[RMDB]
RNA sequence: GGGAACGACUCGAGUAGAGUCGAAAAAACACAACUGAAGAGGGGAUUGGUUUUACUGUUAAAUCAUGUGUUGCUAAAUCAUUUUCUGAACAGUGUGUUCUAAAUCAGUCAUUGAUUUAGUGUCAGCCUAUCUGGAGAGGUUCGCCUCUCCAGAUAGAAAAGAAACAACAACAACAAC
Reactivity to 2A3 in 0.01 (KOAc 150mM, MgCl2 10mM, bicine 150mM(pH8.5), 24C), signal-to-noise 3, nucleotides 027 to 126: a010a000c180a130c150a300a090c030u080g110a230a000g010a050g040g000g000g010a000u030u010g010g010u000u000u020u070a040c030u010g080u130u170a130a150a250u130c070a110u190g090u050g060u190u090g060c060u060a030a040a010u020c010a050u000u010u060u010c000u000g000a030a000c000a020g010u010g010u000g000u020u000c000u010a020a020a010u000c010a000g300u140c080a110u160u030g010a000u000u010u020a050g000u040g070u050c030a030g050c000
Reactivity to DMS in 0.01 (KOAc 150mM, MgCl2 10mM, bicine 150mM(pH8.5), 24C), signal-to-noise 3, nucleotides 027 to 126: a040a010c010a020c020a070a070c000u000g010a090a030g010a300g000g010g010g010a030u000u000g010g010u000u000u010u000a040c080u010g010u000u010a070a110a090u000c080a030u010g030u010g010u010u000g010c170u010a020a010a010u000c010a030u000u010u000u000c000u000g000a150a060c030a020g000u000g020u000g000u000u010c010u000a010a030a020u000c000a010g000u000c250a110u010u000g010a010u000u000u000a010g010u000g010u000c150a140g010c160
The record gives the reactivity of an RNA of 177 nucleotides to 2A3 and DMS. For 2A3 the reverse transcriptase was SuperScript II with manganese. The data come from the RNA Mapping Database (RMDB), library OK2TST. For DMS, 3,715 sequencing reads were counted. The reactions ran in a buffer of 150 mM KOAc, 10 mM MgCl2 and 150 mM bicine (pH 8.5), at 24 C. DMS (dimethyl sulfate) methylates the pairing face of unpaired adenines and cytosines.